Chemical mapping of a 177-nucleotide RNA with 2A3 and DMS. The RNA was probed in 150 mM KOAc, 10 mM MgCl2 and 150 mM bicine (pH 8.5) at 24 C. Reactivities are given for positions 27 through 126.

RNA sequence: GGGAACGACUCGAGUAGAGUCGAAAAGGUGUCAGGAUGUGGUAGCUCUGAAGUGUCUACUGAGUAGAGCCCUGAACUGUUUUGUGCUUCAAUUGUAGACUAACAUAAAUGCCACCAAGGCAUUAAAUAACUUCACAGUGUUCGCACUGUGAAGUUAAAAAGAAACAACAACAACAAC
Reactivity to 2A3 in 0.01 (KOAc 150mM, MgCl2 10mM, bicine 150mM(pH8.5), 24C), signal-to-noise 1, nucleotides 027 to 126: g070g000u000g000u090c000a000g060g030a170u090g010u050g000g070u000a000g010c030u030c030u090g110a170a030g060u010g000u000c010u010a040c010u070g000a000g000u020a010g000a000g020c000c020c030u020g040a100a080c090u050g140u100u160u110u080g020u070g000c020u010u090c000a060a170u160u050g020u020a000g000a030c000u050a030a000c000a030u220a090a110a000u000g000c000c000a040c010c050a050a080g020g000c000a030u000u050a000a020a020
Reactivity to DMS in 0.01 (KOAc 150mM, MgCl2 10mM, bicine 150mM(pH8.5), 24C), signal-to-noise 3, nucleotides 027 to 126: g000g010u010g040u010c000a030g010g020a090u010g000u010g000g010u000a070g030c070u000c070u000g010a090a120g020u000g010u010c020u000a060c000u020g000a140g010u010a140g010a060g020c010c030c020u010g000a050a130c180u010g000u010u000u010u000g010u000g010c030u000u000c050a120a170u010u000g020u000a020g010a040c030u000a070a120c090a030u010a050a040a030u000g010c010c000a090c150c120a080a140g030g010c010a020u000u000a040a050a090